Conditions: 150 mM KOAc, 10 mM MgCl2 and 150 mM bicine (pH 8.5), 24 C.
This 177-nucleotide RNA was probed chemically with DMS and 2A3.
The DMS profile rests on 2,431 reads.
Values are in units of 0.01, from 0 to 300, in steps of 10.
It was measured as part of the RMDB library RFMREP.

RNA sequence: GGGAACGACUCGAGUAGAGUCGAAAAAUGAUUACAGGUAUUCUCGAGUGAAUAAUACAGAAAAGCCUGAUGUUAUUGCUUGAGAAUACACGUAGUAUAAAAAGAUAUUCAGCUUCGGCUGAAUAUCCACAUGUUUUUACUUCGGUAAAAACAUGUGAAAAGAAACAACAACAACAAC
Reactivity to DMS in 0.01 (KOAc 150mM, MgCl2 10mM, bicine 150mM(pH8.5), 24C), signal-to-noise 3, nucleotides 027 to 126: a050u020g000a030u000u000a010c010a220g010g010u000a000u000u000c000u000c010g010a000g010u000g000a050a020u000a020a000u000a010c010a030g000a150a140a110a250g010c300c000u000g000a090u010g020u000u000a010u000u000g010c010u000u000g000a010g010a020a000u000a000c000a000c040g010u000a000g000u000a030u010a070a070a100a070a110g000a000u000a000u000u000c000a000g010c000u000u010c270g020g020c000u000g000a000a000u000a000u000c000
Reactivity to 2A3 in 0.01 (KOAc 150mM, MgCl2 10mM, bicine 150mM(pH8.5), 24C), signal-to-noise 1, nucleotides 027 to 126: a000u160g020a000u060u060a020c040a070g080g060u000a010u010u010c010u000c000g000a000g020u020g050a000a000u000a020a010u000a030c010a000g160a130a280a060a030g180c030c010u050g050a120u040g030u010u000a000u000u000g000c000u020u020g030a000g000a000a000u010a000c020a000c030g010u000a020g020u030a020u140a120a100a010a030a020g000a000u010a010u000u010c020a000g000c000u010u150c210g100g000c000u010g000a000a000u000a000u000c000